[RMDB]
RNA sequence: GGGAACGACUCGAGUAGAGUCGAAAAUCACACCUUUGAGUGUGGAGUCUACACCAGUUGAACCUCCAACUGUAGAUGUGGUAGCACUUCAACAGGAAAUGACAAUUGUCAAAUGUAAGGGUUUAAAUACGGACGCCGUUCGCGGCGUCCAAAAGAAACAACAACAACAAC
Reactivity to 2A3 in 0.01 (KOAc 150mM, MgCl2 10mM, bicine 150mM(pH8.5), 24C), signal-to-noise 2, nucleotides 027 to 129: u170c030a000c000a000c020c020u170u040u110g070a040g030u020g000u000g000g040a050g040u000c010u000a020c000a010c000c000a020g000u000u000g030a030a020c020c000u200c000c090a000a000c000u000g080u070a010g070a120u040g020u010g030g080u040a000g000c010a000c000u030u080c000a040a080c080a050g020g000a000a000a020u150g040a040c020a040a140u190u070g040u000c020a000a000a000u180g050u050a120a080g020g030g040u040u000u000a040a150a030u140a070c110
Reactivity to DMS in 0.01 (KOAc 150mM, MgCl2 10mM, bicine 150mM(pH8.5), 24C), signal-to-noise 2, nucleotides 027 to 129: u040c130a000c140a230c000c000u000u000u000g000a000g020u000g040u060g010g030a140g010u040c070u060a000c060a050c030c000a040g010u060u000g000a030a280c020c060u080c000c000a000a000c030u000g070u000a050g000a180u000g030u050g020g020u000a100g040c050a030c010u020u030c010a080a000c100a010g000g000a040a220a200u040g050a010c100a290a040u090u050g000u050c020a060a090a140u150g000u000a050a100g000g000g030u000u000u020a080a000a000u000a050c070
Description:
The record gives the reactivity of an RNA of 170 nucleotides to 2A3 and DMS. For DMS, 2,568 sequencing reads were counted. Reactivities are given for positions 27 through 129. For 2A3, 1,698 sequencing reads were counted. For 2A3 the reverse transcriptase was SuperScript II with manganese. As a SHAPE reagent, 2A3 marks flexible, mostly unpaired nucleotides at the ribose 2'-OH. The data come from the RNA Mapping Database (RMDB), library 15KLIB.